[RMDB]
RNA sequence: GGGAACGACUCGAGUAGAGUCGAAAAUAAAUCUUAUUCGUAAGAUUUACUUGAACGCUGCAAGCGCCAGCGCGCUCGCUUGCGCACGCACGCGCAAUAAAAAUCUGGGGACAUUCGUGUCCCCAAAAGGUUUAUGUUAAUUCGUUAACAUAAACCUAAAAGAAACAACAACAACAAC
Reactivity to 2A3 in 0.01 (KOAc 150mM, MgCl2 10mM, bicine 150mM(pH8.5), 24C), signal-to-noise 2, nucleotides 027 to 126: u040a000a010a000u000c000u030u020a030u030u090c070g010u010a000a000g000a010u010u000u030a030c030u020u080g090a110a030c010g000c040u020g000c020a000a300g020c010g010c010c040a010g000c030g030c080g080c120u110c020g000c010u010u000g000c000g000c010a000c050g040c010a020c090g000c000g020c010a040a060u150a250a120a040a000a010u080c100u070g000g000g000g010a000c010a000u040u030c110g070u050g010u030c000c010c000c000a000a020a010
Reactivity to DMS in 0.01 (KOAc 150mM, MgCl2 10mM, bicine 150mM(pH8.5), 24C), signal-to-noise 3, nucleotides 027 to 126: u000a010a000a010u000c000u000u000a030u000u010c130g020u010a000a020g000a010u000u000u000a020c090u000u000g000a130a190c040g010c060u000g000c030a240a300g000c020g010c010c080a020g010c070g000c300g030c240u010c040g030c020u010u000g000c010g000c010a030c300g000c060a030c220g020c020g000c030a050a080u020a020a060a100a150a070u020c150u000g010g020g000g010a010c030a020u000u010c170g010u000g000u000c000c000c000c000a000a000a050